[RMDB]
RNA sequence: GGGAACGACUCGAGUAGAGUCGAAAAGGCAGCCUACCAGAUAACCAUUUUGAUUGUUCAUAAAGUGUUACCUUCAUAUUUUGCAAAACCUCUUAUCCAAUUGCGAGUGCAAAGUAGAGUUGGAACAAGCGAUGAUGUAAUUCGUUACAUCAUCGCUAAAAGAAACAACAACAACAAC
Reactivity to 2A3 in 0.01 (KOAc 150mM, MgCl2 10mM, bicine 150mM(pH8.5), 24C), signal-to-noise 3, nucleotides 027 to 126: g030g010c040a010g030c010c000u020a050c010c000a030g020a090u090a010a030c000c020a120u020u010u060u090g080a120u040u080g000u000u040c020a020u130a130a220a040g040u050g060u110u060a170c020c000u010u000c000a010u010a000u030u030u030u030g000c000a000a020a060a100c010c000u070c030u110u160a130u090c010c030a100a080u170u150g060c050g010a020g040u060g030c030a000a030a000g010u000a020g030a010g040u030u010g010g020a000a000c020a030
Reactivity to DMS in 0.01 (KOAc 150mM, MgCl2 10mM, bicine 150mM(pH8.5), 24C), signal-to-noise 2, nucleotides 027 to 126: g010g000c060a040g010c080c010u000a100c010c050a070g030a090u020a100a080c030c040a100u000u010u000u000g030a100u020u000g010u000u000c090a110u010a040a060a020g010u000g000u000u000a090c080c000u000u020c030a100u000a050u000u010u000u000g010c000a020a050a030a060c180c050u030c020u020u010a080u010c110c110a040a070u000u000g030c120g010a060g060u010g000c010a000a010a000g020u000a020g000a120g030u000u000g020g010a020a030c130a090